An RNA of 177 nucleotides, treated with DMS and read out base by base.
The data come from the RNA Mapping Database (RMDB), library OK2TST.
The RNA was probed in 150 mM KOAc, 10 mM MgCl2 and 150 mM bicine (pH 8.5) at 24 C.
For DMS the reverse transcriptase was MarathonRT.
RNA sequence: GGGAACGACUCGAGUAGAGUCGAAAAAGGGUGCGCCGACCAGUACGACGCGACGUUGCGCCUGGGUCAGGCGAGCGAGGGUCGGCAUCAGUAGUUGCAGUUCGCCGACACCGUCGCGGGCAUGGAACGCGAUGGGCAGGUUCGCCUGCCCAUCGCGAAAAGAAACAACAACAACAAC
Reactivity to DMS in 0.01 (KOAc 150mM, MgCl2 10mM, bicine 150mM(pH8.5), 24C), signal-to-noise 1, nucleotides 027 to 126: a100g010g000g020u000g020c050g060c020c090g000a130c030c030a070g000u070a050c050g000a080c050g000c040g010a090c100g000u000u000g010c030g030c030c020u010g010g000g000u020c020a030g030g020c010g000a040g010c020g000a150g000g000g010u000c000g000g000c020a010u000c030a040g040u000a160g010u010u000g020c040a110g000u000u010c110g020c020c010g000a030c020a280c050c000g020u000c020g010c000g030g010g040c080a110u010g020g000a060a170